[RMDB]
RNA sequence: GGGAACGACUCGAGUAGAGUCGAAAACUCAGCAGGGCGCUGUCUUCACUGCUGCUCCGAUGCUCAAGACCCGCACGCAGGGUCUCGCCACCGUCGCCGUCGACGGCUCCGUGUACGAGAAGACGCCUGAUAGGAUAGCUUUCGAGCUAUCCUAUCAAAAAGAAACAACAACAACAAC
Reactivity to 2A3 in 0.01 (KOAc 150mM, MgCl2 10mM, bicine 150mM(pH8.5), 24C), signal-to-noise 3, nucleotides 027 to 126: c020u010c010a020g050c010a030g010g060g020c040g020c100u080g040u050c030u070u060c030a060c040u050g020c020u040g020c010u030c020c020g100a090u100g000c030u040c090a020a030g010a030c030c000c000g030c050a120c120g110c090a100g000g000g040u010c000u000c000g010c000c010a020c010c000g060u050c020g040c130c050g130u220c040g020a050c010g010g020c000u000c010c020g070u040g030u070a060c080g020a010g010a130a010g040a010c020g040c010c030
Reactivity to DMS in 0.01 (KOAc 150mM, MgCl2 10mM, bicine 150mM(pH8.5), 24C), signal-to-noise 6, nucleotides 027 to 126: c070u010c020a080g010c050a050g010g000g020c080g010c080u000g010u020c040u000u000c060a100c050u000g020c030u000g010c060u000c030c040g010a090u000g000c060u000c090a120a060g010a050c020c010c020g010c130a090c200g030c110a150g000g000g000u010c010u000c060g000c230c080a110c040c030g000u000c050g010c080c150g010u010c050g000a070c040g010g000c010u000c040c060g010u000g010u000a090c090g000a080g000a070a080g000a060c100g020c090c120
Chemical mapping of a 177-nucleotide RNA with 2A3 and DMS.
The reactions ran in a buffer of 150 mM KOAc, 10 mM MgCl2 and 150 mM bicine (pH 8.5), at 24 C.
Source: RMDB library OK2TST, as collected in RNAgym.
The 2A3 profile rests on 5,718 reads.